RNA sequence: GGGAACGACUCGAGUAGAGUCGAAAAGAUAUGGACGAGAAGGAACUACCUGUCCCAUCGGAAACGAUGGAACAGGCUAGUUCUCGUCCUAAGUCAAAACCUUGUUAUCCUUCGGGAUAACAAGGAACGUAGCGAUAGUCUUCGGACUAUCGCUACGAAAAGAAACAACAACAACAAC
Reactivity to 2A3 in 0.01 (KOAc 150mM, MgCl2 10mM, bicine 150mM(pH8.5), 24C), signal-to-noise 1, nucleotides 027 to 126: g030a030u070a040u120g000g000a000c000g030a000g040a150a160g250g170a070a060c030u030a040c000c010u010g000u000c020c000c000a010u010c020g030g000a060a070a010c010g000a000u010g000g010a000a010c010a000g010g000c020u010a010g000u000u030c000u000c000g000u000c010c020u020a130a030g030u010c040a020a030a020a120c000c000u000u000g000u000u000a010u020c000c000u040u100c300g150g000g000a000u000a000a000c000a010a000g010g010a000a020
Reactivity to DMS in 0.01 (KOAc 150mM, MgCl2 10mM, bicine 150mM(pH8.5), 24C), signal-to-noise 1, nucleotides 027 to 126: g000a020u000a300u040g050g000a010c010g000a070g010a140a040g020g000a070a130c030u010a110c010c000u000g010u000c010c000c010a010u000c010g000g000a120a090a100c010g010a010u000g010g010a010a000c000a000g010g000c250u040a070g010u000u000c030u000c000g030u000c010c000u000a040a050g000u000c040a160a070a110a150c000c000u000u000g010u000u000a000u000c000c010u000u000c240g000g000g010a000u000a000a000c000a010a000g000g020a000a010
Structure probing data (2A3 and DMS) for a 177-nucleotide construct. The reactions ran in a buffer of 150 mM KOAc, 10 mM MgCl2 and 150 mM bicine (pH 8.5), at 24 C. For 2A3, 3,319 sequencing reads were counted. 2A3 adducts were read by reverse transcription with SuperScript II with manganese. DMS adducts were read by reverse transcription with MarathonRT. For DMS, 982 sequencing reads were counted.